[RMDB]
RNA sequence: GGGAACGACUCGAGUAGAGUCGAAAAGGAUUUAAAAAUUUGGUGAAGUUUUUCCUACAAAUCGGCGCUAUCUAUGGGGAACAGGUAGACGUCGAUGACUUACUACCUGAUCCAACAACAUUAAGUCGCACUGCGAGUAUUUCGAUACUCGCAGUGCAAAAGAAACAACAACAACAAC
Reactivity to 2A3 in 0.01 (KOAc 150mM, MgCl2 10mM, bicine 150mM(pH8.5), 24C), signal-to-noise 1, nucleotides 027 to 126: g020g010a040u010u090u260a190a080a170a140a140u020u060u100g080g000u150g000a080a000g000u010u000u060u010u010c000c000u010a000c040a000a170a000u000c000g010g000c000g150c000u000a000u000c000u000a150u230g060g050g130g100a050a050c000a000g000g000u000a000g120a280c050g000u040c000g030a000u000g000a000c000u000u180a000c000u060a030c000c050u080g060a060u010c000c000a030a150c040a000a000c000a130u070u140a080a060g180u150c060
This 177-nucleotide RNA was probed chemically with 2A3. Values cover nucleotides 27 to 126. The RNA was probed in 150 mM KOAc, 10 mM MgCl2 and 150 mM bicine (pH 8.5) at 24 C. It was measured as part of the RMDB library OK1LIB. The 2A3 profile rests on 379 reads.